[RMDB]
RNA sequence: GGGAACGACUCGAGUAGAGUCGAAAAGAACAGCGAUGAGGUGGUCUGUUCACGAUUGAAGCGUGGCGAUUUACUGAUGGUGCCCAUGCCAGCCACGGUGAUUGAAAUUGGGGAUUAUCUGCAUUUAAAUUAUUAUCAUGUUCGCAUGAUAAUAAUUAAAAGAAACAACAACAACAAC
Reactivity to 2A3 in 0.01 (KOAc 150mM, MgCl2 10mM, bicine 150mM(pH8.5), 24C), signal-to-noise 9, nucleotides 027 to 126: g000a020a010c010a010g010c030g150a130u140g070a090g100g160u110g040g040u030c010u020g040u040u050c040a030c060g100a100u070u200g090a070a010g100c010g000u010g000g020c030g050a060u120u140u230a180c090u130g110a140u090g010g010u050g010c000c010c010a020u080g000c010c010a020g010c000c010a010c010g030g100u060g020a110u100u140g050a070a090a060u080u050g000g000g020g020a010u080u060a050u040c050u070g060c030a060u070u070u190a060
Reactivity to DMS in 0.01 (KOAc 150mM, MgCl2 10mM, bicine 150mM(pH8.5), 24C), signal-to-noise 9, nucleotides 027 to 126: g010a060a060c050a050g010c110g010a110u010g000a110g010g030u000g010g010u000c020u010g000u000u000c020a120c130g000a110u010u010g010a130a150g010c020g020u000g000g010c020g010a120u010u010u010a110c180u010g000a160u000g020g020u000g000c030c020c030a070u010g000c040c030a090g010c020c010a020c040g010g010u000g010a120u000u010g010a050a060a110u010u000g010g010g000g000a110u000u010a040u000c050u010g000c100a110u000u000u000a050

Chemical mapping of a 177-nucleotide RNA with 2A3 and DMS. DMS adducts were read by reverse transcription with MarathonRT. For 2A3, 13,815 sequencing reads were counted. The data come from the RNA Mapping Database (RMDB), library OK2TRN. The reactions ran in a buffer of 150 mM KOAc, 10 mM MgCl2 and 150 mM bicine (pH 8.5), at 24 C. For 2A3 the reverse transcriptase was SuperScript II with manganese.